An RNA of 177 nucleotides, treated with 2A3 and read out base by base.
2A3 is a SHAPE reagent: it acylates the 2'-hydroxyl of flexible nucleotides of all four kinds.
RNA sequence: GGGAACGACUCGAGUAGAGUCGAAAACAACGAUAUUCGUGUACCGCGACGGUCUGCUGUCGAGGCUGACGAUGUCGGCGCCCCGUGCACGCAGAGUGCGCACCAGCGCCUCGCCCAGGUGACCGGACGGUACGCUGCGUUUCGACGCAGCGUACCGAAAAGAAACAACAACAACAAC
Reactivity to 2A3 in 0.01 (KOAc 150mM, MgCl2 10mM, bicine 150mM(pH8.5), 24C), signal-to-noise 2, nucleotides 027 to 126: c030a000a020c070g040a060u050a070u090u250c060g000u020g000u070a000c010c000g090c070g150a130c010g010g000u080c000u080g180c040u030g090u100c040g020a080g030g010c010u150g110a040c080g120a170u110g110u070c020g000g050c050g000c030c000c000c030g020u070g000c050a010c010g060c030a030g030a050g160u100g080c000g000c000a010c170c100a040g010c010g000c030c000u000c030g140c030c010c030a120g000g120u030g000a030c000c000g030g060a010
Record summary
The data come from the RNA Mapping Database (RMDB), library OK1LIB.